Description: Structure probing data (2A3 and DMS) for a 177-nucleotide construct. 2A3 is a SHAPE reagent: it acylates the 2'-hydroxyl of flexible nucleotides of all four kinds. The data come from the RNA Mapping Database (RMDB), library OK1LIB. The RNA was probed in 150 mM KOAc, 10 mM MgCl2 and 150 mM bicine (pH 8.5) at 24 C. For DMS, 1,645 sequencing reads were counted.
RNA sequence: GGGAACGACUCGAGUAGAGUCGAAAAACGUGGGUGUGCUUUGAUAACAUUGCCAUUAUAAAUCAGGCAUUGGCAUGAAGCCAAGAAUUAUGGUUCGUUGGUCAACAACUGUUGGUAAACGCCCAACGCAAAGCUGGAAUUUCGAUUCCAGCUUUGCAAAAGAAACAACAACAACAAC
Reactivity to 2A3 in 0.01 (KOAc 150mM, MgCl2 10mM, bicine 150mM(pH8.5), 24C), signal-to-noise 2, nucleotides 027 to 126: a080c030g000u030g000g060g000u000g000u030g050c090u200u060u250g120a100u030a040a040c040a140u000u070g000c000c090a000u030u030a130u200a120a170a130u290c040a000g080g000c000a070u000u000g000g000c010a000u170g290a070a010g000c000c040a000a030g110a060a110u250u160a050u100g060g000u070u000c120g000u080u010g020g060u040c000a000a000c040a000a010c030u170g090u060u080g040g000u030a020a020a020c110g010c010c000c000a000a000c010
Reactivity to DMS in 0.01 (KOAc 150mM, MgCl2 10mM, bicine 150mM(pH8.5), 24C), signal-to-noise 2, nucleotides 027 to 126: a050c130g090u010g010g000g060u000g000u000g000c030u020u000u000g000a130u010a090a140c030a140u000u000g030c000c020a120u030u040a300u050a060a060a080u070c120a060g030g000c080a130u000u030g020g080c030a030u000g000a140a110g000c000c020a000a050g000a080a050u000u090a020u030g030g020u000u000c090g000u000u000g000g000u000c100a040a050c170a140a030c180u030g000u000u020g010g000u010a020a060a160c140g010c170c000c000a030a020c300